This 177-nucleotide RNA was probed chemically with 2A3 and DMS. In probing experiments dimethyl sulfate is read out at A N1 and C N3, which are open when not base-paired. The RNA was probed in 150 mM KOAc, 10 mM MgCl2 and 150 mM bicine (pH 8.5) at 24 C. For 2A3 the reverse transcriptase was SuperScript II with manganese. For DMS the reverse transcriptase was MarathonRT.
[RMDB]
RNA sequence: GGGAACGACUCGAGUAGAGUCGAAAAUAAAAGCGGCAACCAACGCAGCAGAGGGAUGCAACCCAAGAAGCGGAAGGAGACGCAACUCCAAACCACGAAAGUGGAGCGAAAGCAAGGCGCAAAAAAACUUUAUUACUACGUUCGCGUAGUAAUAAAGAAAAGAAACAACAACAACAAC
Reactivity to 2A3 in 0.01 (KOAc 150mM, MgCl2 10mM, bicine 150mM(pH8.5), 24C), signal-to-noise 3, nucleotides 027 to 126: u080a020a070a000a010g030c000g010g000c020a070a000c030c010a020a040c030g000c030a030g040c010a010g060a080g070g020g010a000u140g090c030a100a140c000c000c010a020a030g090a050a010g010c020g020g050a030a060g030g010a020g020a000c020g000c080a020a030c000u010c010c000a060a040a090c010c020a010c010g040a070a030a060g010u010g000g030a050g030c020g040a080a010a000g020c020a020a030g080g000c050g010c090a040a080a020a040a000a000a000
Reactivity to DMS in 0.01 (KOAc 150mM, MgCl2 10mM, bicine 150mM(pH8.5), 24C), signal-to-noise 4, nucleotides 027 to 126: u000a060a110a120a090g020c040g010g000c050a120a120c060c020a100a130c050g020c050a050g030c100a050g020a180g000g010g010a080u010g020c160a110a090c020c020c010a080a140g020a110a080g010c040g000g010a100a110g010g010a110g010a070c070g020c100a060a090c040u010c020c020a030a100a140c010c000a000c010g010a080a080a160g000u000g000g000a110g000c070g000a060a030a060g010c050a060a040g020g000c050g010c070a000a000a020a090a030a020a090